[RMDB]
Description
The data come from the RNA Mapping Database (RMDB), library OK1LIB. An RNA of 177 nucleotides, treated with 2A3 and DMS and read out base by base. For DMS, 64,524 sequencing reads were counted. Values cover nucleotides 27 to 126. The 2A3 profile rests on 76,810 reads. The RNA was probed in 150 mM KOAc, 10 mM MgCl2 and 150 mM bicine (pH 8.5) at 24 C.
RNA sequence: GGGAACGACUCGAGUAGAGUCGAAAAGAAUAGUCAGUAAGUGGGUUGACUCGCAUGAGAAUGUGAGUCAAAUGAAAGACUGACUACGGUCUGUAUCGUCAUUACCCAUUUACACUACGAUACAUACGGUAGUGUUACAUUUCGAUGUAACGCUACCAAAAGAAACAACAACAACAAC
Reactivity to 2A3 in 0.01 (KOAc 150mM, MgCl2 10mM, bicine 150mM(pH8.5), 24C), signal-to-noise 9, nucleotides 027 to 126: g050a060a040u050a010g020u040c060a010g000u040a090a020g030u070g090g080g000u020u030g000a000c000u000c000g000c000a000u030g040a020g080a240a020u000g010u000g000a000g000u000c000a000a010a000u050g020a020a020a020g060a010c010u000g000a000c000u020a040c070g080g040u010c030u030g030u020a040u030c020g040u010c060a070u030u120a080c000c000c010a010u040u050u040a050c090a010c040u060a010c020g020a020u020a070c030a030u100a030c060
Reactivity to DMS in 0.01 (KOAc 150mM, MgCl2 10mM, bicine 150mM(pH8.5), 24C), signal-to-noise 9, nucleotides 027 to 126: g010a120a140u000a010g000u000c050a040g010u000a010a030g010u010g010g010g010u000u010g000a010c000u000c000g000c000a000u000g000a220g010a150a020u000g010u000g000a020g000u000c000a010a020a040u010g000a120a100a060g010a020c000u000g010a020c020u010a030c190g020g000u010c040u000g000u010a030u010c040g010u010c180a090u010u020a110c000c000c010a050u010u020u020a060c140a100c110u010a020c040g000a050u010a030c050a080u030a100c190